[RMDB]
RNA sequence: GGGAACGACUCGAGUAGAGUCGAAAAUUAUGCUUGCACUUGACUGUGCAUCUUCAGAAUUCUACAAGAAUGGUCAAUAUAUUCUUGAAGGUGAAGGCAACAAGUCUUUUACAAGCAAUCAAUUUGAGCAUAUUAAAUGCUUCGGCAUUUAAUAUGCAAAAGAAACAACAACAACAAC
Reactivity to 2A3 in 0.01 (KOAc 150mM, MgCl2 10mM, bicine 150mM(pH8.5), 24C), signal-to-noise 3, nucleotides 027 to 126: u070u030a030u060g010c000u010u000g000c020a020c030u020u020g010a010c000u010g030u010g020c020a030u020c010u000u000c000a070g110a230a280u220u040c010u060a070c000a040a020g030a020a020u020g040g000u080c030a120a010u130a030u030a010u230u000c010u020u020g010a040a000g050g010u040g000a010a010g030g000c030a050a030c020a190a070g010u020c000u010u030u000u030a000c010a010a000g010c000a000a060u090c080a030a080u060u070u200g060a040
Reactivity to DMS in 0.01 (KOAc 150mM, MgCl2 10mM, bicine 150mM(pH8.5), 24C), signal-to-noise 3, nucleotides 027 to 126: u010u000a130u000g010c000u000u000g010c030a010c020u000u000g020a020c020u000g040u000g000c030a080u010c010u010u000c000a080g010a150a130u010u010c050u000a150c030a000a030g000a000a010u000g000g010u010c260a100a130u010a100u010a020u000u000c000u000u000g010a110a040g020g020u000g010a030a020g000g000c060a060a080c020a090a050g010u000c000u000u010u000u000a040c010a000a000g000c020a040a060u010c200a030a080u000u000u000g000a300